Conditions: 150 mM KOAc, 10 mM MgCl2 and 150 mM bicine (pH 8.5), 24 C. This 177-nucleotide RNA was probed chemically with 2A3 and DMS. For DMS, 1,384 sequencing reads were counted. The 2A3 profile rests on 1,351 reads.
[RMDB]
RNA sequence: GGGAACGACUCGAGUAGAGUCGAAAAAUUUAGAUUACCGAGUGCAUUAGAUAACCGUCCACUUAAAUUUGAAGAAUUUGAAGAAAAGACAAAACAACUUGUGUAUGUAUCUGCAACGCCUGGACCACGUCUCUUUUCCAUUCGUGGAAAAGAGACGAAAAGAAACAACAACAACAAC
Reactivity to 2A3 in 0.01 (KOAc 150mM, MgCl2 10mM, bicine 150mM(pH8.5), 24C), signal-to-noise 3, nucleotides 027 to 126: a000u110u130u070a100g000a020u000u120a000c000c010g000a010g030u070g070c040a110u020u130a050g060a060u070a160a090c050c040g030u000c000c000a030c030u010u070a080a080a090u080u070u170g170a080a060g050a050a060u020u060u110g120a090a080g080a070a150a020a020g020a020c030a040a150a000a010c020a050a040c040u030u010g040u060g000u130a080u050g000u000a030u030c020u000g000c000a030a020c010g010c020c000u060g020g050a030c000c010a000
Reactivity to DMS in 0.01 (KOAc 150mM, MgCl2 10mM, bicine 150mM(pH8.5), 24C), signal-to-noise 1, nucleotides 027 to 126: a040u030u020u000a070g000a070u000u000a160c010c010g020a060g040u020g020c120a040u040u000a070g020a210u040a040a100c150c050g000u000c000c030a150c040u000u000a000a010a020u000u030u030g000a160a070g020a080a020u000u010u000g040a020a060g010a120a040a120a090g000a100c070a020a010a170a040c130a040a120c040u000u030g000u000g000u010a070u000g010u000a060u010c060u020g040c050a000a100c070g020c030c000u000g000g020a010c060c090a200
The data come from the RNA Mapping Database (RMDB), library OK1LIB. For DMS the reverse transcriptase was MarathonRT.